[RMDB]
RNA sequence: GGGAACGACUCGAGUAGAGUCGAAAAUGACAAUGAGUGGCAGCACCUGCUAGAGACCACUGAGCCUGUGCCUAUUCAACUGAAGGCUCCUCUCACCUUGCUGUGUAAUCCUGACUUCUGCCAGCGCAUCCAGAGUCAGCUGCAUGAAGCUGGAGGAAUAAUGCGUAUGAUUCGUCAUACGCAUUAUAAAAGAAACAACAACAACAAC
Reactivity to 2A3 in 0.01 (KOAc 150mM, MgCl2 10mM, bicine 150mM(pH8.5), 24C), signal-to-noise 5, nucleotides 027 to 156: u090g030a010c040a050a100u130g020a040g080u050g010g000c000a010g020c010a100c040c080u080g010c030u070a050g010a020g030a160c020c000a050c100u050g000a010g000c010c030u040g020u060g050c010c010u150a180u090u150c110a150a090c060u100g070a070a000g020g000c010u020c010c000u020c000u000c010a060c010c020u040u060g000c050u030g010u020g040u140a050a050u050c010c010u050g100a140c010u120u020c000u050g110c080c030a040g000c020g000c030a030u060c060c030a030g030a020g140u110c060a030g010c010u020g010c010a020u170g020a060a010g010c010u010g000g010a010g000g000a040
Reactivity to DMS in 0.01 (KOAc 150mM, MgCl2 10mM, bicine 150mM(pH8.5), 24C), signal-to-noise 4, nucleotides 027 to 156: u000g020a130c100a100a110u010g000a080g050u000g000g030c020a110g020c040a110c040c030u010g000c050u020a080g010a190g000a090c020c020a070c080u000g000a060g020c000c010u010g010u000g000c010c040u010a180u000u000c070a080a110c060u010g010a050a060g000g020c020u010c030c050u000c020u000c020a090c040c040u000u010g010c010u010g020u010g010u000a060a120u000c030c010u020g000a050c040u000u000c030u000g000c080c020a100g010c050g010c060a160u000c060c080a080g000a170g020u010c060a140g010c040u010g010c050a110u000g000a070a050g020c020u000g010g000a090g000g020a110